[RMDB]
RNA sequence: GGGAACGACUCGAGUAGAGUCGAAAAAAGUUGCACCAGGUACGGAAACCAGACGUUGCCAAACAGGGUGACAUGAGGAUCACCCAUGUACUGUCCCUUGGCAGCCGUACCUGGUGCUGGUGAAAAAUACGCUAACGCUGUUCGCAGCGUUAGCGUAAAAAGAAACAACAACAACAAC
Reactivity to DMS in 0.01 (KOAc 150mM, MgCl2 10mM, bicine 150mM(pH8.5), 24C), signal-to-noise 1, nucleotides 027 to 126: a090a100g010u010u000g010c000a020c000c000a010g020g000u000a000c000g000g000a130a080a130c170c060a000g000a060c220g030u000u010g000c000c020a010a020a050c010a050g010g000g010u000g010a010c010a100u000g010a190g010g010a100u000c000a010c000c030c000a040u000g030u000a050c170u000g010u000c000c030c030u010u040g010g020c050a170g000c000c010g000u000a000c010c000u000g000g010u010g000c040u000g000g020u000g000a000a010a060a130a060